[RMDB]
RNA sequence: GGGAACGACUCGAGUAGAGUCGAAAAAAUGUAUAAUUUGUUAGCAUGCCUUUGGCUUUUACGCAAGUUUUAUCAGCAUGUAAUCAAUGGUUGCAAAGAUACGGCAUGCUUGCUCUGCUAUAAGAGGGAGAAGCAUAUUGUUCGCAAUAUGCUUCUCAAAAGAAACAACAACAACAAC
Reactivity to DMS in 0.01 (KOAc 150mM, MgCl2 10mM, bicine 150mM(pH8.5), 24C), signal-to-noise 3, nucleotides 027 to 126: a030a050u010g000u000a070u010a070a090u010u000u000g000u000u000a080g020c010a010u000g010c000c000u000u000u000g020g000c020u000u020u010u000a090c160g040c160a070a040g010u000u000u000u000a060u000c070a060g020c120a110u010g010u000a030a050u000c050a060a150u000g020g030u000u000g000c010a040a080a150g010a060u010a080c300g010g010c000a010u000g000c010u010u000g000c000u000c030u000g010c130u000a060u000a070a080g000a060g000g000
Reactivity to 2A3 in 0.01 (KOAc 150mM, MgCl2 10mM, bicine 150mM(pH8.5), 24C), signal-to-noise 2, nucleotides 027 to 126: a000a000u200g060u060a140u060a230a150u010u080u060g030u040u050a000g030c000a000u000g000c000c000u030u080u110g090g010c010u080u080u020u140a030c040g010c020a050a070g030u000u060u020u100a040u060c010a000g110c050a050u050g010u090a020a030u060c080a030a160u170g000g040u050u020g020c020a020a000a070g030a010u040a050c030g000g000c020a000u000g000c000u000u000g000c000u000c000u000g000c000u050a050u020a230a060g030a030g050g070

This 177-nucleotide RNA was probed chemically with DMS and 2A3. DMS adducts were read by reverse transcription with MarathonRT. For DMS, 2,583 sequencing reads were counted. It was measured as part of the RMDB library 15KREP. Conditions: 150 mM KOAc, 10 mM MgCl2 and 150 mM bicine (pH 8.5), 24 C. 2A3 adducts were read by reverse transcription with SuperScript II with manganese.